[RMDB]
RNA sequence: GGGAACGACUCGAGUAGAGUCGAAAAUGAUAUAACCUAAGAAAAGAUCUUGUUGCCAAUUCAGAAACCAUAACCUUAAAUAGCAUGCCUGGGUCUCCUCUGUAUCUGGUUUAACAUCUGCAUUGAAAUACGCAAGUAACUUCGGUUACUUGCGUAUAAAAGAAACAACAACAACAAC
Reactivity to DMS in 0.01 (KOAc 150mM, MgCl2 10mM, bicine 150mM(pH8.5), 24C), signal-to-noise 1, nucleotides 027 to 126: u010g000a160u010a100u010a080a200c020c030u060a100a050g000a060a100a120a170g000a070u010c030u000u000g040u000u020g000c010c070a030a120u010u010c090a060g000a070a120a020c060c040a030u000a100a070c050c000u000u010a000a130a090u000a050g000c020a050u000g020c040c030u000g020g010g000u000c040u000c010c050u000c040u000g020u000a070u000c050u000g010g020u010u000u030a020a020c130a060u010c080u000g000c100a080u000u000g000a040a090